Background
An RNA of 177 nucleotides, treated with 2A3 and DMS and read out base by base. Values cover nucleotides 27 to 126. For 2A3 the reverse transcriptase was SuperScript II with manganese. DMS adducts were read by reverse transcription with MarathonRT.
[RMDB]
RNA sequence: GGGAACGACUCGAGUAGAGUCGAAAACCGAUUUAUAACAACAACCAUCCAGUCUUCUGGAUGCCGAGUGGCUCCUGUCCACUCUGUUUGACGCCUCCCUGUUAUCACUUCGAGCCGCCCCUCGGGCUGUUUAUCACCUUUUCGAAGGUGAUAAACAAAAAGAAACAACAACAACAAC
Reactivity to 2A3 in 0.01 (KOAc 150mM, MgCl2 10mM, bicine 150mM(pH8.5), 24C), signal-to-noise 9, nucleotides 027 to 126: c010c000g010a020u060u200u070a230u160a120a040c080a040a010c010a020a030c040c000a010u000c020c000a010g090u090c110u300u060c010u200g010g000a010u000g000c010c040g020a010g010u020g010g000c030u090c100c080u200g070u120c000c000a000c000u000c010u010g060u010u060u110g040a030c030g010c000c010u020c010c010c000u010g040u090u050a090u110c030a020c070u050u030c040g020a010g010c010c010g030c000c010c000c000u010c010g030g030g000c020
Reactivity to DMS in 0.01 (KOAc 150mM, MgCl2 10mM, bicine 150mM(pH8.5), 24C), signal-to-noise 7, nucleotides 027 to 126: c010c010g000a100u050u030u030a090u030a080a090c120a050a100c160a080a120c270c010a010u000c010c000a020g000u020c160u030u050c010u010g010g000a010u000g010c130c120g010a050g030u000g000g000c040u020c150c120u010g000u020c010c010a050c020u010c010u010g000u000u000u000g010a090c110g010c040c010u000c020c010c020u000g010u010u010a050u010c070a050c040u010u020c030g000a070g010c030c040g010c050c020c010c040u000c070g010g010g020c130